[RMDB]
Source: RMDB library OK1LIB, as collected in RNAgym. The record gives the reactivity of an RNA of 177 nucleotides to DMS and 2A3.

RNA sequence: GGGAACGACUCGAGUAGAGUCGAAAAACAACGGCGCUCAAGAAGAUACACCGCGCAAGCGCACUCUUGACGGAGUGUACGGCGGCAGCAGCGGCAACGACGACCGCCGAAGGCCAAACAGGCGGAAGCACGUGGAUACGUUCGCGUGUCCACGUGCAAAAGAAACAACAACAACAAC
Reactivity to DMS in 0.01 (KOAc 150mM, MgCl2 10mM, bicine 150mM(pH8.5), 24C), signal-to-noise 4, nucleotides 027 to 126: a090c110a100a130c080g000g000c000g000c190u020c030a110a060g020a150a090g000a150u000a120c190a150c040c030g050c020g000c110a070a100g020c050g000c000a020c010u000c000u010u020g000a180c300g000g020a000g040u000g000u010a020c090g000g030c040g010g000c030a070g030c090a040g020c020g000g000c050a010a120c040g030a080c140g000a100c040c010g010c010c000g020a080a080g000g000c010c040a070a030a100c140a120g030g010c020g000g000a080a120
Reactivity to 2A3 in 0.01 (KOAc 150mM, MgCl2 10mM, bicine 150mM(pH8.5), 24C), signal-to-noise 7, nucleotides 027 to 126: a000c080a040a010c030g050g000c020g010c010u040c040a050a080g060a070a010g050a110u140a120c050a020c020c000g010c000g010c080a070a010g030c020g000c020a020c010u020c010u070u140g100a070c140g020g000a010g000u020g010u040a070c100g070g000c000g010g000c020a060g010c020a010g000c020g030g010c040a050a020c050g100a020c060g020a040c020c010g000c000c000g050a080a080g070g000c020c010a070a120a070c040a040g030g000c000g010g020a030a010
Notes: For 2A3, 9,415 sequencing reads were counted. Reactivities are given for positions 27 through 126. For DMS, 5,248 sequencing reads were counted. The RNA was probed in 150 mM KOAc, 10 mM MgCl2 and 150 mM bicine (pH 8.5) at 24 C.